[RMDB]
RNA sequence: GGGAACGACUCGAGUAGAGUCGAAAAGCGUAGUCGAUGGACAACGGGUUGAUAUUCCCGUACCCGUGUGAACGCGCCCCUGGUGAAUCAGUGAUGCUAAGCGCCCUGAAGCCGCCUUCGAACCUUCCAGAAGGUUUAUUUUCGAAUAAACCUUCUGAAAAGAAACAACAACAACAAC
Reactivity to 2A3 in 0.01 (KOAc 150mM, MgCl2 10mM, bicine 150mM(pH8.5), 24C), signal-to-noise 9, nucleotides 027 to 126: g020c020g030u050a050g060u060c030g040a090u130g050g020a030c020a090a010c090g010g000g020u020u080g120a140u060a110u220u070c000c000c000g000u020a030c000c000c020g010u030g050u050g060a090a010c020g010c010g020c010c000c000c000u030g010g040u050g080a040a060u070c020a030g030u040g120a070u100g030c030u070a070a070g040c010g010c040c000c000u010g010a030a010g020c030c010g010c010c000u030u020c010g030a070a060c000c010u050u020c020
Reactivity to DMS in 0.01 (KOAc 150mM, MgCl2 10mM, bicine 150mM(pH8.5), 24C), signal-to-noise 8, nucleotides 027 to 126: g000c020g030u000a080g020u000c010g000a080u010g000g010a060c080a080a030c010g010g000g000u010u010g000a120u020a170u020u010c010c010c000g020u010a040c050c000c000g020u000g010u010g010a070a060c020g010c040g010c030c020c010c040u010g020g000u010g010a130a070u000c060a040g010u010g020a100u010g010c050u020a080a130g010c070g010c030c020c020u010g000a070a120g010c060c040g010c030c030u000u000c080g010a110a130c070c030u000u000c070

About this RNA: Chemical mapping of a 177-nucleotide RNA with 2A3 and DMS. Source: RMDB libraries RFM100 and RFMREP, as collected in RNAgym. 2A3 adducts were read by reverse transcription with SuperScript II with manganese.